Background: Chemical mapping of a 207-nucleotide RNA with DMS and 2A3. Values cover nucleotides 27 to 156. The reactions ran in a buffer of 150 mM KOAc, 10 mM MgCl2 and 150 mM bicine (pH 8.5), at 24 C. The data come from the RNA Mapping Database (RMDB), library OK3TST.

RNA sequence: GGGAACGACUCGAGUAGAGUCGAAAAUUUAGGGUUUGUGACCCAAAUGGUCUCUGUUGAAACUACUAAGCUCUGCCAUUGUAGUAUGAAAGCAGUUAUAGAUGGUAUGUAAAUAAGUAAGUGUGGCUAUAUCCAAUAAAACGUUAUUUACAGAAACGAAUUACCAGCUUUUCGAAGCUGGUAAUUCAAAAGAAACAACAACAACAAC
Reactivity to DMS in 0.01 (KOAc 150mM, MgCl2 10mM, bicine 150mM(pH8.5), 24C), signal-to-noise 1, nucleotides 027 to 156: u000u000u010a150g030g030g020u000u010u010g030u000g060a120c010c000c010a060a060a100u000g010g030u000c030u010c050u010g000u000u000g000a180a130a070c050u010a070c050u010a060a130g050c010u000c050u000g040c000c050a100u010u000g060u000a080g030u000a070u000g020a080a210a110g000c000a100g050u000u010a120u010a100g010a080u000g000g010u010a110u010g060u010a000a010a010u000a010a060g000u000a080a090g030u010g010u000g030g000c070u000a160u000a080u000c040c030a040a090u000a080a050a130a120c040g000u000u000a060u000u000u010a050c000a040g070a080a060a100c140
Reactivity to 2A3 in 0.01 (KOAc 150mM, MgCl2 10mM, bicine 150mM(pH8.5), 24C), signal-to-noise 1, nucleotides 027 to 156: u130u210u120a080g000g000g000u020u050u060g050u060g090a060c040c030c130a000a010a060u070g020g000u060c050u000c010u030g020u010u090g060a170a050a100c010u050a010c020u070a060a000g000c010u030c080u300g000c000c020a040u000u110g010u020a050g000u050a100u060g080a030a050a050g030c010a040g030u100u110a030u000a050g080a050u070g000g040u090a050u140g000u000a120a020a050u120a030a070g080u060a000a090g000u010g020u050g210g000c050u030a030u050a030u260c030c000a160a050u160a090a120a020a000c010g010u000u070a060u020u040u060a090c040a040g120a060a040a000c140